[RMDB]
RNA sequence: GGGAACGACUCGAGUAGAGUCGAAAAGAAUCAUGAAAUGUCGGCGUGACUUUAGACUAUUGUGCAUGUCCGCUUAUUGACUCUAAUAAACUACUGUUGAAGUGGAGGUGGGAUAGUGGUGCGCUAACAUAGUCCGCUUUUUCGAAAGCGGACUAUGAAAAGAAACAACAACAACAAC
Reactivity to 2A3 in 0.01 (KOAc 150mM, MgCl2 10mM, bicine 150mM(pH8.5), 24C), signal-to-noise 3, nucleotides 027 to 126: g010a000a050u080c010a030u100g080a090a070a050u230g030u070c020g010g000c030g020u040g030a100c000u100u140u060a070g070a100c040u040a060u110u180g090u140g070c030a020u040g080u100c010c000g040c000u060u050a090u080u020g010a040c000u000c010u020a040a080u100a120a180a010c060u120a020c050u050g040u080u060g050a070a050g020u030g020g030a020g030g040u080g040g020g000a060u030a020g020u020g010g000u010g000c030g010c050u010a050a040
Reactivity to DMS in 0.01 (KOAc 150mM, MgCl2 10mM, bicine 150mM(pH8.5), 24C), signal-to-noise 3, nucleotides 027 to 126: g010a070a040u030c070a030u030g010a070a120a050u020g000u040c010g000g000c020g000u010g000a040c020u000u000u010a060g020a120c150u020a030u030u020g000u030g020c020a020u000g000u020c000c000g000c030u000u000a110u010u010g000a020c070u000c040u000a040a130u040a080a080a100c080u020a080c110u010g010u000u010g000a050a060g000u010g000g000a060g000g040u020g010g000g010a060u000a050g000u020g010g040u000g010c090g000c040u010a020a210